[RMDB]
RNA sequence: GGGAACGACUCGAGUAGAGUCGAAAAAGCCAUCCAUUACGAUGGAUGGCAAGACCUGCCACAACGGCUUCCUGGCGUGGCGAGGGAAACCUUCAAUGGAGCAACGUCCGUGGUACGCCACGGACGAUCUGCGGAAGCGGUUCGCCGCUUCCGCAGAAAAAGAAACAACAACAACAAC
Reactivity to 2A3 in 0.01 (KOAc 150mM, MgCl2 10mM, bicine 150mM(pH8.5), 24C), signal-to-noise 1, nucleotides 027 to 126: a010g000c000c000a000u000c010c000a000u040u040a100c300g150a000u000g000g000a000u000g000g000c030a000a000g000a010c000c030u010g000c000c010a030c000a000a120c050g080g000c000u120u180c000c000u080g070g010c030g020u000g030g020c050g030a040g040g020g000a060a050a100c030c020u120u120c100a090a210u230g060g010a010g020c030a000a040c060g000u000c000c000g040u000g000g000u030a030c210g130c020c000a000c000g000g040a000c000g000a000
An RNA of 177 nucleotides, treated with 2A3 and read out base by base.
It was measured as part of the RMDB library RFM100.